[RMDB]
Overview:
This 177-nucleotide RNA was probed chemically with 2A3 and DMS. 2A3 adducts were read by reverse transcription with SuperScript II with manganese. The data come from the RNA Mapping Database (RMDB), library OK2TST. The RNA was probed in 150 mM KOAc, 10 mM MgCl2 and 150 mM bicine (pH 8.5) at 24 C.
RNA sequence: GGGAACGACUCGAGUAGAGUCGAAAAAGCUUGGAUGAGAGCAAUAAAUUCGGCAACCAUGUCGGACUUGGUGGAGUCGAGAUCGAGGAACUCGCCGACUUGGUGCAUCAUUCGGAUAUUCCGUUGCGGAGUGUUAAGAAUUCGUUCUUAACACUCCAAAAGAAACAACAACAACAAC
Reactivity to 2A3 in 0.01 (KOAc 150mM, MgCl2 10mM, bicine 150mM(pH8.5), 24C), signal-to-noise 6, nucleotides 027 to 126: a000g090c080u190u170g020g020a030u040g030a030g030a010g050c020a040a070u140a130a080a050u100u080c020g030g010c000a020a040c030c030a080u060g030u020c020g030g010a090c040u080u110g080g040u130g150g090a060g040u040c040g030a040g030a200u160c060g030a070g070g010a060a070c040u020c080g020c010c010g000a000c000u010u030g020g010u040g020c000a030u020c010a010u030u020c010g010g000a020u030a080u090u050c020c030g030u050u050g050c050
Reactivity to DMS in 0.01 (KOAc 150mM, MgCl2 10mM, bicine 150mM(pH8.5), 24C), signal-to-noise 6, nucleotides 027 to 126: a110g000c030u010u000g060g010a030u010g000a040g000a140g030c030a070a080u010a050a070a100u000u010c040g020g010c030a110a100c090c060a080u010g020u010c010g010g000a050c050u000u000g000g020u010g010g010a140g010u000c010g010a120g010a070u010c060g010a080g000g020a130a100c120u000c220g000c010c010g000a020c090u000u010g000g000u000g000c020a170u000c020a050u000u000c010g010g000a060u000a110u000u000c020c010g010u010u000g020c300